Chemical mapping of a 177-nucleotide RNA with 2A3. The data come from the RNA Mapping Database (RMDB), library OK1LIB. The reactions ran in a buffer of 150 mM KOAc, 10 mM MgCl2 and 150 mM bicine (pH 8.5), at 24 C.

[RMDB]
RNA sequence: GGGAACGACUCGAGUAGAGUCGAAAAGGCGGGACUGGGGAGUGGCGAGCCCUCAGAUCCUGCAUAUAAGCAGCUGCUUUUUGCCUGUACUGGGUCUCUCUGGUUAGACCAGAUCUGAGCCUGGGAGGACUAGACCGGUGUUCGCACCGGUCUAGUCAAAAGAAACAACAACAACAAC
Reactivity to 2A3 in 0.01 (KOAc 150mM, MgCl2 10mM, bicine 150mM(pH8.5), 24C), signal-to-noise 2, nucleotides 027 to 126: g160g000c000g000g000g000a010c000u000g000g020g000g020a180g010u050g130g130c160g030a010g000c000c000c000u000c000a030g020a120u010c000c000u010g000c020a030u090a000u000a000a000g070c120a020g020c030u120g040c000u130u050u020u080u110g110c000c000u020g000u090a040c030u020g030g020g060u070c000u000c000u000c000u000g050g000u010u250a080g060a200c010c000a030g000a080u080c090u150g020a010g010c020c010u020g000g080g000a030g010